Chemical mapping of a 177-nucleotide RNA with DMS and 2A3. Reactivities are given for positions 27 through 126. For 2A3 the reverse transcriptase was SuperScript II with manganese. The reactions ran in a buffer of 150 mM KOAc, 10 mM MgCl2 and 150 mM bicine (pH 8.5), at 24 C. Source: RMDB library OK2TRN, as collected in RNAgym.
[RMDB]
RNA sequence: GGGAACGACUCGAGUAGAGUCGAAAAUAGGGUGAUGUCAACUUAAACCAGCCAUCAUAUGUCUGGUUAGACCAGAAAGACAUUUAGGCCCUGACUGGUCCACUUGUUCCAUCGGAGCUUCAGGUGCUACGAUGAUCGUCUUCGGACGAUCAUCGUAAAAAGAAACAACAACAACAAC
Reactivity to DMS in 0.01 (KOAc 150mM, MgCl2 10mM, bicine 150mM(pH8.5), 24C), signal-to-noise 2, nucleotides 027 to 126: u010a090g020g030g030u020g010a010u000g010u000c040a020a200c160u010u000a040a060a030c000c010a000g000c040c020a050u000c210a130u020a300u000g010u000c000u000g020g010u000u000a040g010a240c080c120a070g000a110a100a130g000a020c000a020u000u000u020a080g000g000c010c010c010u020g000a060c080u000g000g000u000c010c040a090c060u010u010g000u000u000c040c010a100u000c110g000g020a050g010c020u000u000c040a030g030g000u010g020c060
Reactivity to 2A3 in 0.01 (KOAc 150mM, MgCl2 10mM, bicine 150mM(pH8.5), 24C), signal-to-noise 1, nucleotides 027 to 126: u250a010g000g000g050u030g030a040u030g020u000c040a060a040c080u080u120a070a000a020c010c000a010g000c040c030a050u130c050a020u150a040u240g000u000c010u000g000g030u000u080a030g000a060c020c020a000g150a080a080a000g030a000c000a020u010u070u120a120g040g010c000c020c000u000g020a030c030u070g000g070u000c000c000a020c070u100u050g100u120u030c020c020a100u090c100g060g000a020g040c000u080u060c040a060g000g050u070g050c010